[RMDB]
RNA sequence: GGGAACGACUCGAGUAGAGUCGAAAAUGCUUGAACCCGGGAGGUGGAGGUUACAGUGAGCCAAGGUCGCGCCACUGCACUCCAGCCUGGCAACAGAGCAAGACUCCAUCUCAAAAAACAACAACAACGUACAAAGACCAUUCGUGGUCUUUGUACGAAAAGAAACAACAACAACAAC
Reactivity to DMS in 0.01 (KOAc 150mM, MgCl2 10mM, bicine 150mM(pH8.5), 24C), signal-to-noise 2, nucleotides 027 to 126: u010g000c020u010u010g010a130a180c190c020c020g030g010g030a060g010g030u000g000g000a040g010g000u000u010a080c040a010g020u010g000a050g000c000c050a100a070g000g000u000c130g000c090g010c010c020a030c030u000g000c110a070c020u000c030c000a060g030c010c020u000g010g010c120a060a120c070a210g000a010g000c000a090a030g000a110c050u000c010c010a080u010c040u020c030a000a080a060a050a030a070c090a040a010c000a020a060c100a050a070
Reactivity to 2A3 in 0.01 (KOAc 150mM, MgCl2 10mM, bicine 150mM(pH8.5), 24C), signal-to-noise 2, nucleotides 027 to 126: u060g000c010u000u050g010a040a020c010c000c000g030g040g020a090g000g210u090g000g030a010g030g020u150u140a030c020a000g000u020g030a030g050c030c020a110a050g280g080u210c050g020c030g010c090c000a000c000u000g040c060a030c020u000c000c000a000g030c000c000u000g000g010c000a090a070c030a070g060a000g000c010a030a010g030a050c020u010c030c030a080u000c110u040c100a030a020a010a090a050a100c040a020a010c020a000a000c000a000a000

The record gives the reactivity of an RNA of 177 nucleotides to DMS and 2A3.
The reactions ran in a buffer of 150 mM KOAc, 10 mM MgCl2 and 150 mM bicine (pH 8.5), at 24 C.
Source: RMDB library OK2TRN, as collected in RNAgym.
Reactivities are given for positions 27 through 126.